[RMDB]
RNA sequence: GGGAACGACUCGAGUAGAGUCGAAAAUCAUUAUGGCAAGGGCUGUGGUGAAUGUCUCAAUACCAAAUUGAAGGAAAAUUUGUGCCCUAUUCAGUAGCACCUUGGGAAGAUGAGUGUGUUGGGAAACUUGAAAUGUGAAAACUGACCUGCUGGUUUGAAUUUAGCAUCUAUUCGUAGAUGCUAAAUUAAAAGAAACAACAACAACAAC
Reactivity to DMS in 0.01 (KOAc 150mM, MgCl2 10mM, bicine 150mM(pH8.5), 24C), signal-to-noise 4, nucleotides 027 to 156: u010c050a100u010u010a050u000g020g030c030a150a120g020g010g040c030u000g040u010g020g060u000g000a040a070u010g020u000c020u000c040a090a110u000a140c050c040a030a060a120u000u000g020a090a090g020g000a070a080a080a150u000u000u010g010u000g020c000c010c010u000a140u010u010c070a080g000u000a070g010c020a050c020c070u000u000g010g010g010a080a090g020a080u000g000a140g010u000g010u000g010u000u000g010g010g010a090a040a060c060u000u000g000a040a090a100u000g010u000g000a070a030a070a090c040u010g010a060c040c030u000g010c020u000g010g000u000u000u000g010
Reactivity to 2A3 in 0.01 (KOAc 150mM, MgCl2 10mM, bicine 150mM(pH8.5), 24C), signal-to-noise 6, nucleotides 027 to 156: u060c010a020u040u150a060u110g020g000c040a040a070g070g050g020c020u030g040u060g060g050u040g040a100a080u070g080u000c020u000c030a050a060u110a120c040c030a070a070a100u090u110g050a050a080g060g040a070a110a050a090u070u110u090g080u080g010c010c010c010u030a070u040u090c030a010g040u030a010g010c020a030c020c010u040u050g020g000g010a020a030g030a050u050g010a030g030u050g000u010g040u040u050g020g010g000a080a060a020c030u030u060g050a040a080a090u090g030u010g040a010a070a020a080c030u020g020a030c000c030u060g040c010u050g040g040u030u060u090g010
Conditions: 150 mM KOAc, 10 mM MgCl2 and 150 mM bicine (pH 8.5), 24 C.
Chemical mapping of a 207-nucleotide RNA with DMS and 2A3.
2A3 adducts were read by reverse transcription with SuperScript II with manganese.